Chemical mapping of a 207-nucleotide RNA with 2A3 and DMS. For DMS, 5,081 sequencing reads were counted. For DMS the reverse transcriptase was MarathonRT. 2A3 adducts were read by reverse transcription with SuperScript II with manganese. The RNA was probed in 150 mM KOAc, 10 mM MgCl2 and 150 mM bicine (pH 8.5) at 24 C.

[RMDB]
RNA sequence: GGGAACGACUCGAGUAGAGUCGAAAAACGCGGAGUACGCUCCCCGACAACACUUCUUUCGACCCGCUAACCGAGACCUAUGGGUCGUUAAAUUACGUCUCUAUCUUACUCACAUAACAUCGCACAAAAAACGUGGUUCGGUUCGCCGAACCACGAACAAUGAAUGACUGUUCGCAGUCAUUCAUUGAAAAGAAACAACAACAACAAC
Reactivity to 2A3 in 0.01 (KOAc 150mM, MgCl2 10mM, bicine 150mM(pH8.5), 24C), signal-to-noise 6, nucleotides 027 to 156: a000c040g020c050g010g030a040g040u080a040c060g030c020u020c000c010c000c000g060a040c030a180a020c050a040c060u130u130c040u050u230u130c010g010a010c000c010c000g040c180u150a020a010c040c020g030a000g020a020c010c000u030a080u240g010g000g000u000c000g040u000u010a000a020a020u130u050a010c020g000u010c020u000c010u030a100u070c060u080u110a100c030u080c070a060c020a130u170a140a040c030a120u130c100g060c130a060c120a060a030a050a070a080a030c060g000u000g000g000u000u000c000g000g010u030u040c120g020c050c000g010a000a000c000c000a000c000g000a000a000
Reactivity to DMS in 0.01 (KOAc 150mM, MgCl2 10mM, bicine 150mM(pH8.5), 24C), signal-to-noise 2, nucleotides 027 to 156: a060c030g020c100g030g020a110g040u000a090c050g040c030u000c020c020c010c030g010a130c120a030a120c050a080c070u000u000c050u000u000u000c000g020a110c040c010c010g010c120u010a120a090c050c070g000a050g000a060c020c050u020a070u000g000g020g010u000c010g040u000u000a010a070a060u020u010a030c030g010u000c010u000c000u000a060u000c080u000u010a080c040u000c010a080c070a130u010a050a090c060a100u000c050g020c050a090c080a000a040a080a040a050a090c010g000u010g010g040u000u000c030g000g030u010u000c300g040c000c010g000a000a020c000c000a000c000g000a010a040